[RMDB]
RNA sequence: GGGAACGACUCGAGUAGAGUCGAAAAUCUUGACAGAGCUGGCGAUAGAUCUGGUAACGGGUAGACAGGAGAUCGGCACACUGGACCAAGUGAACCAUAUCGACCGGUGACAGUAGUUGAGGUGGAAUCCCUGGUGGACGUUCGCGUCUACCAGGGAAAAAGAAACAACAACAACAAC
Reactivity to 2A3 in 0.01 (KOAc 150mM, MgCl2 10mM, bicine 150mM(pH8.5), 24C), signal-to-noise 2, nucleotides 027 to 126: u000c000u000u000g020a000c000a010g040a030g020c010u000g000g000c020g000a010u060a000g030a010u010c000u010g090g000u000a040a040c000g050g000g020u080a080g050a100c000a040g030g040a050g020a130u110c060g060g000c020a020c000a020c020u060g040g000a030c010c000a160a000g030u030g110a070a070c010c010a000u010a040u080c040g140a210c050c000g000g050u110g050a080c000a050g220u300a000g000u020u020g020a010g070g000u020g020g030a050a030
Reactivity to DMS in 0.01 (KOAc 150mM, MgCl2 10mM, bicine 150mM(pH8.5), 24C), signal-to-noise 2, nucleotides 027 to 126: u000c010u000u000g000a070c030a090g000a300g030c030u000g000g020c000g000a030u010a050g010a050u010c060u010g030g020u040a150a050c090g000g000g000u010a110g010a080c070a020g000g000a030g000a110u020c080g000g000c070a030c050a100c090u010g010g050a060c050c000a050a040g000u010g000a100a110c070c000a100u020a030u020c010g020a090c060c040g010g020u000g000a060c190a060g000u000a040g000u000u000g000a080g000g020u000g000g000a160a080